[RMDB]
RNA sequence: GGGAACGACUCGAGUAGAGUCGAAAAAUGUGCAUAUCAUGCGACUGAUCCGAGAUAUGUGCCACCUCCUGACUUCAGACUCCAACCACGGAUCCACGCAGAUGCAGAUGUGCUUUCGUUUGGGAGAACGCGGUAUACGAUUCGUCGUAUACCGCGUAAAAGAAACAACAACAACAAC
Reactivity to 2A3 in 0.01 (KOAc 150mM, MgCl2 10mM, bicine 150mM(pH8.5), 24C), signal-to-noise 3, nucleotides 027 to 126: a000u130g040u060g020c000a000u000a000u050c080a060u130g060c000g110a110c090u080g060a080u040c050c030g070a040g030a100u060a030u080g080u040g010c000c000a050c000c000u030c010c020u070g090a120c010u060u050c070a050g040a110c010u000c010c050a040a050c060c000a000c000g040g000a030u000c010c000a040c030g000c010a020g040a110u170g030c030a020g030a120u050g010u030g100c000u000u040u090c110g050u040u130u100g070g030g000a080g000a090
Reactivity to DMS in 0.01 (KOAc 150mM, MgCl2 10mM, bicine 150mM(pH8.5), 24C), signal-to-noise 2, nucleotides 027 to 126: a070u010g000u000g020c000a000u000a040u000c000a130u010g000c090g020a060c140u000g030a010u000c010c020g010a220g000a120u020a090u000g000u000g000c170c060a010c120c020u030c040c000u020g000a060c040u030u000c230a070g000a050c050u000c030c020a070a100c120c190a090c000g020g000a050u010c010c070a130c040g020c100a060g030a050u040g000c030a070g000a030u010g000u000g000c000u090u000u000c040g000u000u020u000g000g040g040a090g030a020
This 177-nucleotide RNA was probed chemically with 2A3 and DMS. 2A3 is a SHAPE reagent: it acylates the 2'-hydroxyl of flexible nucleotides of all four kinds. Reactivities are given for positions 27 through 126. The data come from the RNA Mapping Database (RMDB), library OK1LIB. Reactivities are rounded to 0.1 and cut off at 0 and 3.